[RMDB]
RNA sequence: GGGAACGACUCGAGUAGAGUCGAAAAGAUAUGGAUCCGUAACUCGCUUGGAUUUAUGGGUAAAACUUAUAUCGGAAACGAUAUAAGGAGUACGCCCAUUGUCAGCGAGGAGAAGGAUCCUAAGUCACAUACGUGCAAACUUCGGUUUGCACGUAUGAAAAGAAACAACAACAACAAC
Reactivity to 2A3 in 0.01 (KOAc 150mM, MgCl2 10mM, bicine 150mM(pH8.5), 24C), signal-to-noise 1, nucleotides 027 to 126: g000a010u040a070u180g030g000a000u000c000c000g030u000a010a040c000u020c000g040c060u130u300g210g020a080u300u300u150a010u090g000g010g110u090a040a080a060a100c030u050u000a000u000a010u010c000g040g000a210a070a060c000g000a000u010a000u000a020a000g030g000a050g110u020a020c130g010c020c020c000a000u000u020g000u010c000a000g000c010g000a000g030g000a020g010a000a000g000g000a040u000c000c000u010a080a010g020u020c010a010
Reactivity to DMS in 0.01 (KOAc 150mM, MgCl2 10mM, bicine 150mM(pH8.5), 24C), signal-to-noise 2, nucleotides 027 to 126: g020a010u000a300u010g000g010a000u020c010c010g010u030a210a300c000u000c010g000c000u000u010g030g020a000u010u000u000a010u010g010g020g040u000a050a150a150a140c000u010u000a000u000a010u000c000g020g000a130a080a270c000g030a030u000a000u000a000a000g010g000a070g000u000a060c300g000c000c000c000a030u000u000g010u000c010a020g000c000g010a010g000g020a080g000a140a240g000g000a000u000c000c000u030a030a110g000u010c050a260